[RMDB]
RNA sequence: GGGAACGACUCGAGUAGAGUCGAAAAGACAAUCCAGGUAACCGGAUGUCAUCACGUUGUUGCAGUACCAGAUGGCAUCUUAAAUCCGAUCUGCAAAUAAGCAUGUAGAAAGCUGAUGUGGGCUUUAAAAACGUGGUGCUGUUCGCAGCACCACGAAGUACAAAACUCAGUUCGCUGAGUUUUGUACAAAAGAAACAACAACAACAAC
Reactivity to DMS in 0.01 (KOAc 150mM, MgCl2 10mM, bicine 150mM(pH8.5), 24C), signal-to-noise 2, nucleotides 027 to 156: g030a080c020a060a080u010c020c000a130g000g000u000a100a140c110c040g020g000a040u000g060u000c010a080u000c020a170c180g000u000u010g000u020u020g000c020a090g000u000a100c080c060a180g010a030u000g010g030c020a020u000c040u000u000a030a060a110u000c030c020g000a150u000c040u020g040c010a030a050a110u000a090a180g020c020a130u000g010u040a080g020a070a070a140g010c020u000g020a070u000g010u000g000g000g030c030u000u000u000a040a020a090a120a140c060g050u000g040g000u020g010c000u000g030u000u000c260g000c040a060g010c000a020c020c000a000c000g020a020a060
Reactivity to 2A3 in 0.01 (KOAc 150mM, MgCl2 10mM, bicine 150mM(pH8.5), 24C), signal-to-noise 2, nucleotides 027 to 156: g050a010c020a020a090u050c030c040a030g060g040u060a060a060c050c030g000g000a000u000g010u010c000a010u020c010a010c160g050u110u000g020u050u080g060c110a070g030u100a080c030c060a000g000a000u010g020g010c000a000u000c040u000u090a070a030a030u010c010c020g050a040u050c010u080g030c010a000a120a020u110a150a140g060c050a060u100g030u080a040g110a150a110a020g000c070u050g000a060u080g060u130g040g010g070c020u110u080u210a040a130a030a000a010c000g000u000g000g000u000g000c010u020g010u000u020c160g020c090a010g000c000a000c010c010a000c000g010a000a010
Structure probing data (DMS and 2A3) for a 207-nucleotide construct.
For 2A3, 843 sequencing reads were counted.
Reactivities are given for positions 27 through 156.
For DMS, 2,997 sequencing reads were counted.
Values are in units of 0.01, from 0 to 300, in steps of 10.